[RMDB]
RNA sequence: GGGAACGACUCGAGUAGAGUCGAAAAUUUAACGCUGUUUUAUUGGCGCAAAGGCUUACGGAUAAACAACUAAUAAUUAAACCUUUUGUGUGCGAAACGUGGUUGUUUAACGUACUCUUUAAUCGCUUUGGGGAUGUGUCCUUCGGGACACAUCCAAGCAUGAAUUGAGAUUCGUCUCAAUUCAUGCAAAAGAAACAACAACAACAAC
Reactivity to 2A3 in 0.01 (KOAc 150mM, MgCl2 10mM, bicine 150mM(pH8.5), 24C), signal-to-noise 6, nucleotides 027 to 156: u100u100u060a070a020c060g000c050u020g110u060u060u040u130a120u100u170g020g000c010g000c050a080a080a010g020g000c010u030u030a000c010g050g130a230u070a060a010a000c010a000a010c020u060a030a100u070a130a060u220u120a070a060a060c030c010u040u150u190u200g200u100g020u040g070c110g030a050a040a030c140g030u030g010g000u000u000g000u000u020u010a010a000c000g010u010a020c000u020c000u040u090u050a140a160u100c010g030c060u070u110u160g090g050g000g000a000u000g000u000g000u000c000c000u020u040c160g070g000g010a000c000a000c000a000u000c000c000a000a000
Reactivity to DMS in 0.01 (KOAc 150mM, MgCl2 10mM, bicine 150mM(pH8.5), 24C), signal-to-noise 2, nucleotides 027 to 156: u010u000u000a070a100c090g040c030u000g030u000u000u000u000a090u030u000g030g010c010g010c140a120a060a090g020g010c080u000u000a100c030g020g000a240u000a060a040a050c000a020a070c040u000a070a130u000a080a150u000u010a090a130a030c020c010u000u000u000u000g050u000g030u000g060c030g000a120a050a110c120g020u000g000g020u000u000g010u000u000u000a030a050c010g040u000a080c120u010c050u000u010u000a100a100u010c020g010c030u000u000u000g010g010g040g010a040u010g060u000g020u000c000c000u000u010c300g010g010g000a030c000a000c010a000u000c000c000a030a160